[RMDB]
Chemical mapping of a 207-nucleotide RNA with 2A3. For 2A3, 723 sequencing reads were counted. Values are in units of 0.01, from 0 to 300, in steps of 10. Reactivities are given for positions 27 through 156.
RNA sequence: GGGAACGACUCGAGUAGAGUCGAAAAUUGCGCUUGCCUAUUUAGGCAUACUUCUCAGGAUGGCGCGUCGCAGUCCAACAAGAUCCAGGGACUGUACAGAAUUUUCCUAUACCUCGAGUCGGGUUUGAAAACGUUAGGCACUUCGGUGCCUAACGAACCACAGCGAAUCGUUCGCGAUUCGCUGUGGAAAAGAAACAACAACAACAAC
Reactivity to 2A3 in 0.01 (KOAc 150mM, MgCl2 10mM, bicine 150mM(pH8.5), 24C), signal-to-noise 1, nucleotides 027 to 156: u020u040g020c000g000c000u000u120g020c000c010u180a260u210u270u300a050g000g000c000a010u040a030c040u120u080c080u010c160a080g080g050a210u180g030g000c000g000c000g030u020c010g000c010a000g010u000c000c000a110a020c010a060a270g080a210u100c150c100a010g050g000g000a000c000u000g010u020a040c030a000g210a040a010u000u020u000u000c000c000u030a030u040a140c020c000u010c000g000a010g010u000c030g020g020g000u070u020u000g040a050a040a020a000c010g000u000u000a000g000g000c010a000c000u000u050c260g050g000u000g000c000c000u000a000a000c000g000a000a000